RNA sequence: GGGAACGACUCGAGUAGAGUCGAAAAGAAAGAAAGUUCUUAGGAAGAGGAGCAGAGUGACCGGCACGACGAAGCUCCAGCAAGCGGUGUAAUGGCGAAAGCCAUGACCAAGCAGCUAAAGCCGGGACGGACGAACACCGUCGACCCUAAGAACAAAACUACGCCUCGUAUUCGUACGAGGCGUAGUAAAAGAAACAACAACAACAAC
Reactivity to 2A3 in 0.01 (KOAc 150mM, MgCl2 10mM, bicine 150mM(pH8.5), 24C), signal-to-noise 1, nucleotides 027 to 156: g060a010a070a010g130a000a160a040g000u010u020c010u020u000a010g000g050a040a000g060a060g100g010a010g020c000a000g060a020g060u080g020a020c010c010g050g000c020a000c000g300a040c010g000a090a020g000c010u000c020c000a010g000c000a010a000g020c000g030g020u060g050u180a030a070u030g010g000c030g010a010a000a010g020c000c010a000u000g010a000c000c000a000a060g030c010a000g000c000u060a070a040a000g000c030c000g000g080g000a000c000g000g000a020c140g090a140a080c100a000c080c000g000u030c000g030a060c000c000c010u000a010a000g000a000a020c010a060a010a000